[RMDB]
RNA sequence: GGGAACGACUCGAGUAGAGUCGAAAAGGGGUCGUCGUUUGACGUUUCCGACAUGCGUGCAUACUGAAGCCUCCACGGUAUGAAACGCAACAGCGGAAACCGAGACGACGGAGGCACCCAAAAGACUUUUCGAAGUAUUCGUACUUCGAAAAGUCAAGGCUAAAACCUUAUUCGUAAGGUUUUAGCCAAAAGAAACAACAACAACAAC
Reactivity to 2A3 in 0.01 (KOAc 150mM, MgCl2 10mM, bicine 150mM(pH8.5), 24C), signal-to-noise 4, nucleotides 027 to 156: g050g030g010g010u020c010g000u000c000g010u060u170u190g010a010c000g000u000u000u010c040c020g040a130c150a200u300g000c000g000u000g000c000a000u000a010c000u030g040a130a050g040c030c000u020c020c030a060c050g010g000u020a010u020g040a300a280a010c010g000c030a130a150c080a150g010c010g000g000a000a010a000c010c000g010a030g000a020c000g000a000c020g000g000a000g000g010c020a030c010c000c000a050a160a010a060g010a000c000u000u000u000u000c000g000a010a000g000u010a030u020u250c300g040u070a020c000u010u000c000g000a000a000a000a000g000u000c000a000a030
Reactivity to DMS in 0.01 (KOAc 150mM, MgCl2 10mM, bicine 150mM(pH8.5), 24C), signal-to-noise 1, nucleotides 027 to 156: g000g000g010g010u010c000g040u000c000g070u000u040u000g010a160c180g000u000u010u020c000c010g020a030c110a150u000g000c020g050u000g000c000a020u000a040c030u010g010a040a110g020c000c000u020c010c040a210c180g020g030u000a010u000g010a030a100a020c000g020c010a040a130c110a080g040c000g000g010a030a030a010c040c010g000a220g010a060c030g000a030c030g000g030a030g020g060c000a080c010c000c000a090a030a090a120g000a010c000u000u000u000u000c000g020a020a010g030u000a070u000u000c300g010u000a040c000u000u000c000g010a000a000a030a000g010u000c000a000a060